This 177-nucleotide RNA was probed chemically with DMS. High DMS reactivity at an A or C suggests that its Watson-Crick edge is free. DMS adducts were read by reverse transcription with MarathonRT. It was measured as part of the RMDB library OK2TRN. Conditions: 150 mM KOAc, 10 mM MgCl2 and 150 mM bicine (pH 8.5), 24 C.
RNA sequence: GGGAACGACUCGAGUAGAGUCGAAAAUGUCCACCUUGGCCUGUGCCCCCUUACCUUCCGUGUGGGAGUCCCCCUCAGCUGUCACCCUCCACUGCACCAGAACGCCCAUCAGGCUGAGCAGGGGCCACGAGACAUAGGUUUUCGAACCUAUGUCUCGAAAAGAAACAACAACAACAAC
Reactivity to DMS in 0.01 (KOAc 150mM, MgCl2 10mM, bicine 150mM(pH8.5), 24C), signal-to-noise 3, nucleotides 027 to 126: u010g010u010c020c020a130c100c030u010u000g020g020c040c020u000g000u000g000c020c030c010c010c050u000u000a060c090c030u010u000c020c060g040u010g010u000g030g020g000a110g020u000c000c030c010c050c010u010c040a060g020c030u000g010u000c080a090c040c050c020u000c070c010a070c070u000g020c030a090c060c070a060g010a050a090c200g010c010c030c030a100u020c090a080g000g000c000u000g000a050g030c090a080g010g010g050g010c070c080a110